[RMDB]
RNA sequence: GGGAACGACUCGAGUAGAGUCGAAAAACUUUGAUGGCGGUACUAUGAAUUGUUGCAAGGUGUGGAGCGACCUUAAACAGUUCUGGUGGUGCUCUGAAUGGAGUGCUCUACUGAGAUUAUAAAAUAGCAUGCAUAGAGUGCUUCGGCACUCUAUGAACCUCUUGUAUUCCUUCGGGAAUACAAGAGGAAAAGAAACAACAACAACAAC
Reactivity to 2A3 in 0.01 (KOAc 150mM, MgCl2 10mM, bicine 150mM(pH8.5), 24C), signal-to-noise 6, nucleotides 027 to 156: a000c060u130u060u110g050a060u080g010g010c030g030g080u040a020c020u040a070u180g020a040a020u050u020g010u000u040g050c090a020a020g010g000u040g030u120g090g020a040g020c030g010a010c000c000u030u060a020a030a020c020a020g000u020u010c010u040g010g000u030g010g140u020g010c020u010c020u060g120a090a080u190g010g010a020g010u040g010c010u010c010u040a030c020u040g020a020g020a100u120u150a090u200a160a070a060a070u150a040g090c090a040u120g020c000a000u010a000g000a000g000u000g000c000u010u010c040g020g000c000a000c000u000c000u000a000u000g000a000a010